[RMDB]
RNA sequence: GGGAACGACUCGAGUAGAGUCGAAAAUGUAUUUGGGGGUGCGUGGGGAAACUUGGGGAAAUAUAGAUUUGUUAUUAAACUAUUUUUUUAAUAACCUCCAAAACCCCCGAAACCUUAUUGGGCGGAACGAUCGUAUGGAGUUCGCUCUGUAUGAUCGAAAAGAAACAACAACAACAAC
Reactivity to 2A3 in 0.01 (KOAc 150mM, MgCl2 10mM, bicine 150mM(pH8.5), 24C), signal-to-noise 2, nucleotides 027 to 126: u110g020u030a260u040u070u060g010g010g030g020g010u040g010c050g040u300g010g000g000g020a050a060a020c050u020u020g000g000g010g020a000a020a000u150a000u010a020g030a060u080u050u060g010u020u050a110u060u100a100a000a000c000u000a070u020u060u010u000u000u000u000a000a000u010a010a020c000c000u000c000c000a000a050a040a050c010c000c000c010c000g000a000a010a010c000c000u030u100a170u140u160g040g010g040c040g010g000a080a020
Reactivity to DMS in 0.01 (KOAc 150mM, MgCl2 10mM, bicine 150mM(pH8.5), 24C), signal-to-noise 2, nucleotides 027 to 126: u010g000u030a080u000u010u000g010g000g010g000g010u000g000c300g000u020g030g010g010g000a040a030a050c220u010u000g000g000g000g010a050a040a040u010a020u010a090g000a230u000u010u000g000u010u060a060u040u030a010a020a060c020u010a000u010u010u010u000u010u000u010a020a010u000a000a070c010c030u000c010c020a010a070a100a060c010c000c000c000c020g000a020a070a050c020c040u020u000a090u010u010g000g010g020c040g000g010a080a110
Overview
Chemical mapping of a 177-nucleotide RNA with 2A3 and DMS. Reactivities are rounded to 0.1 and cut off at 0 and 3. DMS adducts were read by reverse transcription with MarathonRT.